About this RNA: An RNA of 177 nucleotides, treated with 2A3 and read out base by base. It was measured as part of the RMDB library RFM100. Values cover nucleotides 27 to 126. The reactions ran in a buffer of 150 mM KOAc, 10 mM MgCl2 and 150 mM bicine (pH 8.5), at 24 C. 2A3 adducts were read by reverse transcription with SuperScript II with manganese.
RNA sequence: GGGAACGACUCGAGUAGAGUCGAAAACUUUUACUCCCAAAAUCUUUUUACCGUGGGGUAAAAAGAAUCAUCAUGGGGGUAUAAAAGGAACCAAAUUUAAAUUUAACUCAAGGGGUCUUGAUGUCGUAUCUUUGAGAUUCUUCGGAAUCUCAAAGAUAAAAGAAACAACAACAACAAC
Reactivity to 2A3 in 0.01 (KOAc 150mM, MgCl2 10mM, bicine 150mM(pH8.5), 24C), signal-to-noise 1, nucleotides 027 to 126: c010u020u030u000u000a000c000u030c000c000c000a120a000a000a000u000c000u020u000u000u000u000a000c020c010g080u170g100g300g000g000u020a000a000a000a000a000g010a000a080u190c010a010u000c030a010u050g000g000g000g010g010u010a000u160a060a080a000a000g030g020a030a040c020c000a000a000a090u200u200u170a110a140a030u070u170u090a140a000c010u000c040a030a020g120g000g120g030u070c010u060u020g000a020u110g070u070c010g000u010